[RMDB]
RNA sequence: GGGAACGACUCGAGUAGAGUCGAAAAACUUUGUUAUAUGCCUGACACAUUCCACAGUUUUCAAAAGCUAUUAUUAUGGAAGUCUAAGCAAGAAAUAAUAGUGGCAGCGAGAUGCAUAAAAGAACAACGUAUAGACUUGUUUCGACAAGUCUAUACGAAAAGAAACAACAACAACAAC
Reactivity to DMS in 0.01 (KOAc 150mM, MgCl2 10mM, bicine 150mM(pH8.5), 24C), signal-to-noise 2, nucleotides 027 to 126: a080c070u010u000u000g010u000u000a120u010a070u000g020c020c010u000g020a100c080a080c090a120u000u000c000c050a070c080a060g010u000u000u010u000c040a060a070a190a170g000c000u000a020u000u000a000u000u000a000u000g000g020a180a090g020u000c110u000a120a130g020c130a040a040g000a230a090a020u000a010a010u000a010g010u000g010g000c020a030g000c290g020a060g000a040u000g000c030a050u010a030a060a030a080g000a080a070c080a050a130
Reactivity to 2A3 in 0.01 (KOAc 150mM, MgCl2 10mM, bicine 150mM(pH8.5), 24C), signal-to-noise 2, nucleotides 027 to 126: a000c070u200u120u110g040u140u020a170u000a010u150g030c010c030u080g040a040c020a000c010a130u050u060c010c010a070c020a050g000u010u050u030u130c110a220a250a050a020g010c000u020a000u080u000a010u030u000a010u130g010g060a020a030g040u000c040u250a120a000g100c040a120a050g000a060a060a020u060a030a000u000a010g000u010g010g000c010a000g000c010g020a050g000a010u070g030c010a040u080a090a110a010a000g090a050a000c040a090a010
Conditions: 150 mM KOAc, 10 mM MgCl2 and 150 mM bicine (pH 8.5), 24 C. The record gives the reactivity of an RNA of 177 nucleotides to DMS and 2A3. For 2A3 the reverse transcriptase was SuperScript II with manganese.